[RMDB]
RNA sequence: GGGAACGACUCGAGUAGAGUCGAAAAGCACAACUUCGGUUGUGCAAAAAAGAUAUGGAUCGACGAACUACCUUCCUAAGACCUUUGAUCUCGGAAACGAGGGAGGUCGAAGGAAGGCGUCGAUCCUAAGUCAAAAAGUACCGUUUCGACGGUACAAUCACGAGAACGGAUUCGUCCGUUCUCGUGAAAAAGAAACAACAACAACAAC
Reactivity to 2A3 in 0.01 (KOAc 150mM, MgCl2 10mM, bicine 150mM(pH8.5), 24C), signal-to-noise 1, nucleotides 027 to 156: g000c000a000c010a000a000c010u080u100c280g100g010u000u000g000u020g000c000a000a000a090a000a000a000g050a040u070a030u090g000g000a000u010c000g020a000c010g020a030a060c070u070a080c300c010u030u000c010c000u040a090a020g000a000c000c000u130u130u070g110a110u020c000u000c030g040g020a120a130a100c010g010a000g000g000g000a000g020g000u010c000g000a010a010g000g000a010a000g000g000c000g000u020c000g000a000u030c000c000u010a000a000g000u040c040a000a000a000a150a000g000u010a000c020c000g000u000u030u150c300g110a050c000g000g000u000a000c010a000a030
The record gives the reactivity of an RNA of 207 nucleotides to 2A3. For 2A3 the reverse transcriptase was SuperScript II with manganese. Source: RMDB library RNAMAK, as collected in RNAgym. Conditions: 150 mM KOAc, 10 mM MgCl2 and 150 mM bicine (pH 8.5), 24 C. For 2A3, 1,259 sequencing reads were counted.